[RMDB]
RNA sequence: GGGAACGACUCGAGUAGAGUCGAAAAGAUAUGGACUAGAACUACUCCGUCUUAUUUCAUCGAUCUCGGAAACGAGGGAGAAAUAGGGCGGAGCUAGUCCUAAGUCAAAGCGGCCUUCGGGCCGCAACCGUACUAAGAUGUUCGCAUCUUAGUACGGAAAAGAAACAACAACAACAAC
Reactivity to DMS in 0.01 (KOAc 150mM, MgCl2 10mM, bicine 150mM(pH8.5), 24C), signal-to-noise 4, nucleotides 027 to 126: g000a050u000a300u000g000g010a020c000u000a020g010a050a010c040u010a300c000u000c000c000g040u000c000u000u000a010u000u000u000c010a300u010c170g000a050u000c000u000c000g000g000a080a060a140c000g000a020g000g000g010a020g000a010a010a010u000a000g000g000g000c000g000g000a010g000c030u000a000g010u000c000c000u000a010a050g010u000c000a060a140a130g000c010g010g000c000c010u000u010c190g030g010g040c000c000g020c000a000a020
Reactivity to 2A3 in 0.01 (KOAc 150mM, MgCl2 10mM, bicine 150mM(pH8.5), 24C), signal-to-noise 3, nucleotides 027 to 126: g040a010u080a060u160g020g000a000c010u030a010g020a090a060c100u230a040c000u300c000c000g020u010c010u010u000a020u000u030u040c150a300u300c060g060a070u020c020u000c010g020g020a100a080a060c010g000a010g000g010g000a030g000a000a000a000u010a010g000g000g000c000g000g000a000g010c000u000a000g010u000c000c000u020a070a010g010u000c010a000a130a070g020c010g000g010c000c010u070u190c270g090g000g000c010c000g010c000a000a010
Conditions: 150 mM KOAc, 10 mM MgCl2 and 150 mM bicine (pH 8.5), 24 C. An RNA of 177 nucleotides, treated with DMS and 2A3 and read out base by base. The 2A3 profile rests on 10,930 reads. Reactivities are given for positions 27 through 126. The DMS profile rests on 4,256 reads.